The record gives the reactivity of an RNA of 177 nucleotides to DMS.
Conditions: 150 mM KOAc, 10 mM MgCl2 and 150 mM bicine (pH 8.5), 24 C.
For DMS the reverse transcriptase was MarathonRT.

[RMDB]
RNA sequence: GGGAACGACUCGAGUAGAGUCGAAAAGAUAAAAGCGUGCACCAGGCGAGAUGAGCACACAGUGUUUGUUAGAGACAGAGAUGCUGCAAGGAGCGUCGCGUGUGCAGCGGUGUUAACUAGCGCAUCAACCAGGAGGUUGUUUCGACAACCUCCUGGUAAAAGAAACAACAACAACAAC
Reactivity to DMS in 0.01 (KOAc 150mM, MgCl2 10mM, bicine 150mM(pH8.5), 24C), signal-to-noise 2, nucleotides 027 to 126: g000a130u010a080a130a110a080g000c080g000u000g010c040a120c010c050a140g000g010c000g000a120g000a030u000g000a100g010c050a040c040a090c100a090g020u000g000u000u000u000g020u000u020a050g020a150g040a040c060a020g000a130g010a040u000g000c020u000g090c080a090a030g000g010a080g000c000g000u000c000g000c060g000u010g000u000g010c130a170g020c040g000g000u000g000u000u020a060a070c060u000a110g040c060g010c020a010u000c050a120
Record summary: It was measured as part of the RMDB library OK2TST.